[RMDB]
RNA sequence: GGGAACGACUCGAGUAGAGUCGAAAAGGGCAUACCGAGGGUCAGAGCACCUCGUAAAUCCAACUGAAAAACUUUAGUCGCAAACGACGAAAACUACGCCCUGGCCGCUUAAGGUCCAGGACUCACACUAGCCUGUUCAUGGGCUAGGCCGGGUCAAGUUCUAUCGGAAGUUCGCUUCCGAUAGAACAAAAGAAACAACAACAACAAC
Reactivity to 2A3 in 0.01 (KOAc 150mM, MgCl2 10mM, bicine 150mM(pH8.5), 24C), signal-to-noise 3, nucleotides 027 to 156: g050g010g020c040a040u050a090c010c030g000a010g000g030g000u070c050a020g010a010g030c080a040c010c000u010c010g090u110a020a010a020u000c010c000a010a020c020u060g040a050a020a080a010a050c080u160u180u190a060g010u040c010g000c130a090a150a160c080g050a010c020g020a060a040a050a060c080u180a050c070g020c010c000c000u000g000g000c000c000g020c110u220u180a140a040g000g000u000c000c010a030g000g080a010c010u010c010a040c000a010c060u010a000g000c000c000u060g060u210u140c140a180u300g010g000g000c000u020a020g000g000c010c040g000g020g000u030c010a070a060